[RMDB]
Notes: This 177-nucleotide RNA was probed chemically with DMS and 2A3. The reactions ran in a buffer of 150 mM KOAc, 10 mM MgCl2 and 150 mM bicine (pH 8.5), at 24 C.
RNA sequence: GGGAACGACUCGAGUAGAGUCGAAAAGUUGGAAAUCCCUCGUGAAUGUGGCAGGCAUCGACUGCCAAGACUAAGUACUCUCCGAGACCGAUAGUGAACAAGUAGUGUGAACGAACGCUGAAAAGCAAACUUUGCUUUUAUUCGUAAAAGCAAAGUUAAAAGAAACAACAACAACAAC
Reactivity to DMS in 0.01 (KOAc 150mM, MgCl2 10mM, bicine 150mM(pH8.5), 24C), signal-to-noise 9, nucleotides 027 to 126: g020u010u000g020g010a080a110a110u010c010c010c020u000c100g010u010g000a080a060u020g010u010g010g010c010a010g010g010c080a130u020c180g010a080c030u000g000c000c010a040a060g010a090c080u000a060a090g010u010a060c040u000c030u010c030c040g000a080g000a090c070c060g000a080u010a040g010u010g010a110a070c060a060a080g000u000a060g020u000g020u000g010a110a050c070g000a090a090c170g010c010u010g000a070a060a090a050g020c060a120
Reactivity to 2A3 in 0.01 (KOAc 150mM, MgCl2 10mM, bicine 150mM(pH8.5), 24C), signal-to-noise 6, nucleotides 027 to 126: g060u050u050g070g060a050a100a070u040c010c040c000u020c040g090u090g130a180a120u160g020u050g070g000c010a020g010g020c040a140u150c130g110a070c010u000g000c000c000a000a000g010a000c030u050a060a030g040u060a080c010u010c010u010c040c020g050a030g050a100c000c020g040a030u050a060g080u060g070a060a010c020a100a010g060u090a040g030u060g020u050g080a040a020c060g010a060a000c050g000c010u030g010a040a030a010a030g020c010a010

Values cover nucleotides 27 to 126.